[RMDB]
RNA sequence: GGGAACGACUCGAGUAGAGUCGAAAAAAUGCCGGCUCAGUUCCAAGCUCUUUCGUGGCACUGUAAACAGUCCUAUUGAGUUAGGGGCAGUCAACCACGUUGCGAAGCUAAAUUAUCUGGUCGAGAGUUACGAUUCCCUACUUCGGUAGGGAAUCAAGAAUGAGUUACUGUUCGCAGUAACUCAUUCAAAAGAAACAACAACAACAAC
Reactivity to DMS in 0.01 (KOAc 150mM, MgCl2 10mM, bicine 150mM(pH8.5), 24C), signal-to-noise 3, nucleotides 027 to 156: a070a070u000g030c020c020g020g020c020u010c030a150g010u000u000c020c010a150a300g000c010u000c010u000u000u000c030g050u000g010g010c030a030c000u010g010u000a020a070a040c040a160g000u010c010c010u000a030u000u010g010a270g030u000u000a020g010g020g000g020c010a010g010u000c030a070a060c010c010a040c040g020u000u000g050c090g010a040a060g020c030u000a040a020a060u010u000a080u000c080u010g010g030u000c030g020a110g000a150g000u000u000a080c110g000a050u000u010c010c000c000u000a010c010u000u010c260g010g050u000a010g010g000g010a000a000u000c010a010a200
Reactivity to 2A3 in 0.01 (KOAc 150mM, MgCl2 10mM, bicine 150mM(pH8.5), 24C), signal-to-noise 5, nucleotides 027 to 156: a000a000u130g030c010c020g000g000c020u030c130a040g000u090u020c040c030a050a020g010c000u010c010u020u030u020c030g000u000g000g000c100a000c010u010g040u100a100a200a110c020a070g090u060c000c000u010a020u040u140g140a230g270u060u040a010g000g010g020g000c000a000g010u020c010a020a040c010c000a010c000g010u010u040g040c130g120a090a040g000c030u060a020a120a080u210u130a090u080c030u050g010g010u010c010g020a010g010a010g240u100u130a050c090g000a000u000u000c010c000c000u000a000c010u020u050c090g040g000u000a000g000g000g000a000a000u000c000a000a000

The data come from the RNA Mapping Database (RMDB), library M2RFPK.
Chemical mapping of a 207-nucleotide RNA with DMS and 2A3.
The reactions ran in a buffer of 150 mM KOAc, 10 mM MgCl2 and 150 mM bicine (pH 8.5), at 24 C.
Reactivities are rounded to 0.1 and cut off at 0 and 3.